[RMDB]
RNA sequence: GGGAACGACUCGAGUAGAGUCGAAAAAGGGCGGGGCGAAAUUCCCCACCGGCGGUAAAUCAACUCAGUUGAAAGCCGCGAGCGCUUUGGGUGCGAACUCAAAGGACAGCAGAUCCGGUGUAAUUCCCGAAAUUUACACGUUCGCGUGUAAAUUUCGAAAAGAAACAACAACAACAAC
Reactivity to DMS in 0.01 (KOAc 150mM, MgCl2 10mM, bicine 150mM(pH8.5), 24C), signal-to-noise 1, nucleotides 027 to 126: a030g010g000g030c040g020g000g000g010c030g040a070a150a220u010u030c040c000c000c000a130c020c070g000g020c000g000g000u000a030a090a160u030c040a010a020c020u050c120a210g030u000u000g000a000a120a300g000c000c010g020c230g000a190g010c000g010c000u010u010u010g000g000g000u020g040c300g000a240a020c000u020c000a020a030a030g000g000a150c020a030g030c010a080g000a250u050c040c000g080g000u020g050u020a100a140u060u000c020c010